[RMDB]
RNA sequence: GGGAACGACUCGAGUAGAGUCGAAAAAUACGGCUACAGCGCCACGGGCAGGCUGGAGAGUGUGCGCACCCUCGCACCAGACCUGGACAUCCGCAUCCCGUAUGCCACGGACCCGGCGGGCAACCGGGUGGAGGAGGUAAUUCGUUACCUCCUCCACAAAAGAAACAACAACAACAAC
Reactivity to 2A3 in 0.01 (KOAc 150mM, MgCl2 10mM, bicine 150mM(pH8.5), 24C), signal-to-noise 2, nucleotides 027 to 126: a020u080a030c040g000g010c020u060a060c040a090g040c040g020c050c040a030c040g020g030g020c020a030g000g050c000u040g020g020a050g010a000g060u100g010u050g040c090g000c020a130c020c000c000u020c010g040c010a040c010c000a020g130a240c040c020u030g040g030a040c030a080u050c030c020g020c020a050u030c030c000c000g040u030a080u150g060c000c030a080c030g040g000a050c020c000c000g070g000c030g000g040g000c010a010a020c010c000g070g070
Reactivity to DMS in 0.01 (KOAc 150mM, MgCl2 10mM, bicine 150mM(pH8.5), 24C), signal-to-noise 4, nucleotides 027 to 126: a090u010a040c050g000g000c060u000a080c120a110g000c080g010c050c060a080c110g020g010g020c060a040g000g010c020u000g010g010a100g010a070g000u000g020u000g010c130g010c060a090c040c040c020u010c020g020c100a090c050c020a060g000a110c030c010u000g000g020a080c070a080u010c070c030g000c050a150u000c090c010c010g010u010a060u010g020c050c030a120c100g000g000a110c020c000c010g000g000c040g010g000g000c080a110a140c020c000g010g010
Background:
The record gives the reactivity of an RNA of 177 nucleotides to 2A3 and DMS. 2A3 adducts were read by reverse transcription with SuperScript II with manganese. For 2A3, 3,181 sequencing reads were counted. DMS adducts were read by reverse transcription with MarathonRT. The RNA was probed in 150 mM KOAc, 10 mM MgCl2 and 150 mM bicine (pH 8.5) at 24 C.